This 207-nucleotide RNA was probed chemically with 2A3. The 2A3 profile rests on 383 reads. Reactivities are given for positions 27 through 156. The RNA was probed in 150 mM KOAc, 10 mM MgCl2 and 150 mM bicine (pH 8.5) at 24 C.

RNA sequence: GGGAACGACUCGAGUAGAGUCGAAAAUAUUUAGACCUCUCUUACGCGUCGAUAGUGCAGAGGGUGUUGAUGGUAAUGAAACACUCCUUCGACAGAAACAUAUAGAUAUGAUAUCUAUAGAAGAUCAUGAUAGUGCCACAAAAAUUACAUCAUGGAACACGGGUAUACGGUUCGCCGUAUACCCGUGAAAAGAAACAACAACAACAAC
Reactivity to 2A3 in 0.01 (KOAc 150mM, MgCl2 10mM, bicine 150mM(pH8.5), 24C), signal-to-noise 1, nucleotides 027 to 156: u100a000u030u210u160a060g000a010c000c000u060c010u000c040u090u040a000c110g020c110g000u000c000g100a020u040a150g140u240g100c010a000g020a150g040g030g020u020g000u090u070g220a190u090g150g170u150a180a040u070g000a110a000a000c010a000c090u040c020c040u000u120c000g040a020c000a020g140a030a100a000c010a020u000a000u000a040g000a000u120a030u100g010a010u140a060u300c000u000a060u010a000g040a020a020g040a060u210c000a010u040g000a000u000a100g000u030g080c030c000a050c030a060a160a000a000a000u180u030a000c000a010u110c000a000u030g000g060a110a070